[RMDB]
Structure probing data (2A3 and DMS) for a 177-nucleotide construct. The data come from the RNA Mapping Database (RMDB), library OK2TST. 2A3 adducts were read by reverse transcription with SuperScript II with manganese. The RNA was probed in 150 mM KOAc, 10 mM MgCl2 and 150 mM bicine (pH 8.5) at 24 C. For 2A3, 15,773 sequencing reads were counted.

RNA sequence: GGGAACGACUCGAGUAGAGUCGAAAAGCCGGGUUCCGAGGCUCAGGCCCCUCACUGCUGUGCCACCCUGUCCCUUCAGGACAGAUCCAGAGUGUUGUGACUUAUGACCUGGCUCUGGACUCCGGCCCUGUCUAACGAUAUUCGUAUCGUUAGACAGAAAAGAAACAACAACAACAAC
Reactivity to 2A3 in 0.01 (KOAc 150mM, MgCl2 10mM, bicine 150mM(pH8.5), 24C), signal-to-noise 8, nucleotides 027 to 126: g000c000c000g000g000g010u020u000c010c010g020a030g130g000c090u070c270a010g000g010c020c020c000c010u010c000a050c010u300g090c000u040g140u230g100c070c030a070c040c020c000u000g000u000c010c000c000u120u170c100a060g000g000a000c000a000g000a010u010c010c000a000g000a010g010u020g050u090u070g070u140g050a070c080u290u200a120u300g080a160c000c000u000g010g000c000u000c000u010g000g010a000c020u030c040c010g000g030c000c010
Reactivity to DMS in 0.01 (KOAc 150mM, MgCl2 10mM, bicine 150mM(pH8.5), 24C), signal-to-noise 5, nucleotides 027 to 126: g010c010c000g010g000g000u000u000c010c010g000a040g010g000c020u020c010a020g000g010c030c010c050c030u000c010a010c010u010g020c010u000g000u020g000c080c070a100c270c090c010u000g010u000c000c000c140u010u010c270a160g000g000a030c010a010g000a100u000c070c000a020g000a030g020u000g000u010u000g000u010g010a110c230u010u010a120u010g000a040c020c020u000g000g000c000u000c010u000g010g000a030c030u000c010c010g000g010c010c070